[RMDB]
RNA sequence: GGGAACGACUCGAGUAGAGUCGAAAACUACAGUACAUGUGGUACCUACAUGGUACUCGGAUCGCGAUCUGCUAGACAUGCUAGUGCGUACGUACCGUGUCUAGUACUAGCUAGUCUGAUCACGUACUGGCAUUACAGUCUUCGGACUGUAAUGCCAAAAAGAAACAACAACAACAAC
Reactivity to 2A3 in 0.01 (KOAc 150mM, MgCl2 10mM, bicine 150mM(pH8.5), 24C), signal-to-noise 3, nucleotides 027 to 126: c010u070a030c020a030g040u050a020c040a080u130g060u140g030g030u020a010c000c010u080a180c050a200u290g010g000u020a010c000u010c020g070g010a030u050c030g000c030g040a020u020c000u010g010c010u000a000g010a070c040a070u100g020c030u060a030g010u010g030c030g040u150a130c120g070u040a040c070c000g020u040g040u000c010u010a010g000u010a040c010u000a020g000c000u020a020g020u000c040u030g020a040u040c020a000c110g010u010a020c010
Reactivity to DMS in 0.01 (KOAc 150mM, MgCl2 10mM, bicine 150mM(pH8.5), 24C), signal-to-noise 3, nucleotides 027 to 126: c040u010a110c100a000g000u000a010c000a180u000g020u020g020g020u000a010c020c010u000a070c290a080u020g000g020u000a000c000u000c070g000g010a030u000c300g020c080g000a040u010c120u000g000c000u010a020g000a080c090a130u000g000c170u010a020g010u000g000c020g020u020a080c190g040u020a060c040c040g020u000g010u020c000u000a010g020u000a020c100u000a170g010c020u000a130g000u000c020u030g010a060u000c030a060c110g020u000a020c020